[RMDB]
RNA sequence: GGGAACGACUCGAGUAGAGUCGAAAAACGACCACUACGGCUUACGAGCCGUAGUGGUCGACGGUAGCUGGAUAAAACCGGGCCAUUGGCCAAACCCAGCCCAUCAACUGCAGCACCUGUCCCGCAGGUGAGGAACCUUGCUUCGGCAAGGUUCCAAGCUAUUGGUAAAGUUCGCUUUACCAAUAGCAAAAGAAACAACAACAACAAC
Reactivity to 2A3 in 0.01 (KOAc 150mM, MgCl2 10mM, bicine 150mM(pH8.5), 24C), signal-to-noise 1, nucleotides 027 to 156: a000c010g000a010c010c000a000c000u020a000c000g000g000c000u120u100a080c270g090a050g000c020c000g030u010a000g010u000g000g000u020c000g030a000c000g010g000u000a010g000c000u000g040g010a100u130a140a140a010a030c020c000g010g000g010c040c030a270u210u300g020g000c010c000a010a000a000c010c030c000a000g010c000c010c000a090u150c040a020a220c030u080g060c110a100g040c010a010c000c000u050g030u060c030c010c020g010c010a020g000g030u000g040a070g010g010a000a000c010c010u000u010g020c000u080u170c260g040g000c010a030a020g020g050u010u030c010c010a000a010

Chemical mapping of a 207-nucleotide RNA with 2A3. It was measured as part of the RMDB library M2RFPK. 2A3 adducts were read by reverse transcription with SuperScript II with manganese.